[RMDB]
RNA sequence: GGGAACGACUCGAGUAGAGUCGAAAAGAUAUGGAACCUUGGGAGGAACUACAGAUCGUGAGUCGGAAACGACUCGAUCUGCCAUCGAUCAAGGUUCCUAAGUCAAACAGCUGGUUCGCCAGCUGAACGACCAUAAUGUGUUCGCACAUUAUGGUCGAAAAGAAACAACAACAACAAC
Reactivity to 2A3 in 0.01 (KOAc 150mM, MgCl2 10mM, bicine 150mM(pH8.5), 24C), signal-to-noise 3, nucleotides 027 to 126: g000a010u030a000u060g000g000a010a000c000c010u000u000g000g000g020a090g080g130a170a080c170u280a070c260a000g000a000u020c040g140u180g210a070g020u000c000g000g040a010a000a000c010g000a000c010u010c010g010a000u000c000u000g060c010c010a260u300c000g010a010u050c010a000a000g000g000u000u010c000c000u010a000a020g000u010c010a010a040a170c010a010g000c000u020g030g090u100u130c250g090c100c010a010g000c020u000g000a030a040
Reactivity to DMS in 0.01 (KOAc 150mM, MgCl2 10mM, bicine 150mM(pH8.5), 24C), signal-to-noise 3, nucleotides 027 to 126: g000a020u000a250u000g000g000a000a000c010c000u010u000g000g000g020a300g000g000a060a110c070u020a140c010a030g000a010u000c000g000u010g030a020g020u000c000g010g010a040a060a130c010g000a000c000u000c000g000a000u010c000u010g030c040c160a070u010c030g010a300u000c000a010a000g020g000u010u000c000c000u000a010a060g000u010c020a150a110a250c010a000g010c000u000g010g010u010u010c270g000c010c000a020g000c020u000g000a040a100
The record gives the reactivity of an RNA of 177 nucleotides to 2A3 and DMS. The reactions ran in a buffer of 150 mM KOAc, 10 mM MgCl2 and 150 mM bicine (pH 8.5), at 24 C. Reactivities are rounded to 0.1 and cut off at 0 and 3. For DMS the reverse transcriptase was MarathonRT. The DMS profile rests on 2,070 reads. High 2A3 reactivity points to a flexible backbone, as in loops and unpaired stretches.